[RMDB]
Source: RMDB library 15KREP, as collected in RNAgym. Structure probing data (2A3 and DMS) for a 177-nucleotide construct.

RNA sequence: GGGAACGACUCGAGUAGAGUCGAAAAAGAACUCUUAUCUUCCUGCUUAGAAGAGGAGUCUCCUGGACGCCCCGCCCGGUCGGGAUGGGCCGCAGUUCCCGACGAGGAGCCCGCAGGUGGGAGGAUCGAGUACUUAGUACUUCGGUACUAAGUACUCAAAAGAAACAACAACAACAAC
Reactivity to 2A3 in 0.01 (KOAc 150mM, MgCl2 10mM, bicine 150mM(pH8.5), 24C), signal-to-noise 2, nucleotides 027 to 126: a000g050a070a020c030u050c010u060u080a060u050c000u000u000c010c000u020g030c030u110u120a050g040a300a020g030a260g060g010a020g010u010c010u000c010c000u040g060g030a060c030g040c000c000c000c000g020c040c000c000g240g160u180c130g040g040g020a010u020g020g000g010c000c030g040c030a040g010u030u000c040c000c000g020a040c010g020a040g020g000a010g010c000c010c010g030c080a020g010g010u010g020g010g000a010g010g000a020u070c100
Reactivity to DMS in 0.01 (KOAc 150mM, MgCl2 10mM, bicine 150mM(pH8.5), 24C), signal-to-noise 1, nucleotides 027 to 126: a070g010a110a080c030u000c020u010u010a110u000c000u000u000c020c050u000g000c090u010u010a090g010a060a090g010a040g000g010a150g010u000c020u000c020c030u010g040g000a190c020g000c140c000c010c080g010c020c000c000g000g030u000c150g030g020g000a030u020g000g000g010c070c060g010c080a110g000u000u000c000c010c010g030a060c040g010a050g000g000a100g030c050c010c060g000c090a040g010g010u000g020g010g000a060g000g000a070u010c220
Record summary
For 2A3 the reverse transcriptase was SuperScript II with manganese.